[RMDB]
RNA sequence: GGGAACGACUCGAGUAGAGUCGAAAAGGAGGCCUAGAUGUUGAAGACGCUACGCAGACGUGCAUGACGAGAGGACGCGGAUUUGCCAGGAGGCUGAGGUCCUUUGCAGAAAGGUCGACACUGCGAGCCCUCGGCGAAGUUUCGACUUCGCCGAGGGAAAAGAAACAACAACAACAAC
Reactivity to DMS in 0.01 (KOAc 150mM, MgCl2 10mM, bicine 150mM(pH8.5), 24C), signal-to-noise 1, nucleotides 027 to 126: g000g000a090g010g020c000c030u000a080g000a120u000g020u000u010g010a140a120g000a120c010g000c040u020a100c070g010c050a040g010a090c060g000u010g010c070a080u000g000a140c070g010a160g000a060g000g020a060c050g020c080g000g010a080u010u000u010g040c080c020a110g000g000a080g010g040c040u000g010a080g000g000u000c000c010u000u000u000g000c050a050g000a040a130a080g010g010u000c010g030a080c120a110c040u000g000c080g000a080g030